[RMDB]
RNA sequence: GGGAACGACUCGAGUAGAGUCGAAAAUUCAUGGUGGUUGGCUUCGCCUUGAACUUCGUGAUCGGCACCUUGGCAUACUUCCUGCUGAGCAAGCUGACCGCCAUGCGCCGGGUCGACAGGGCGACGGACGCGCGUGGACAUUCGUGUCCACGCGCGUAAAAGAAACAACAACAACAAC
Reactivity to DMS in 0.01 (KOAc 150mM, MgCl2 10mM, bicine 150mM(pH8.5), 24C), signal-to-noise 1, nucleotides 027 to 126: u010u050c000a030u000g000g030u010g030g010u000u010g000g030c030u000u000c300g010c020c040u000u000g000a080a120c080u000u000c300g010u000g010a150u000c070g000g000c000a240c200c000u020u000g000g000c010a040u010a120c190u020u020c180c030u030g000c030u000g010a000g010c300a020a050g000c000u010g000a040c020c000g010c010c000a000u000g000c190g000c020c010g060g000g040u030c040g010a100c120a060g010g000g000c010g040a050c110g000g010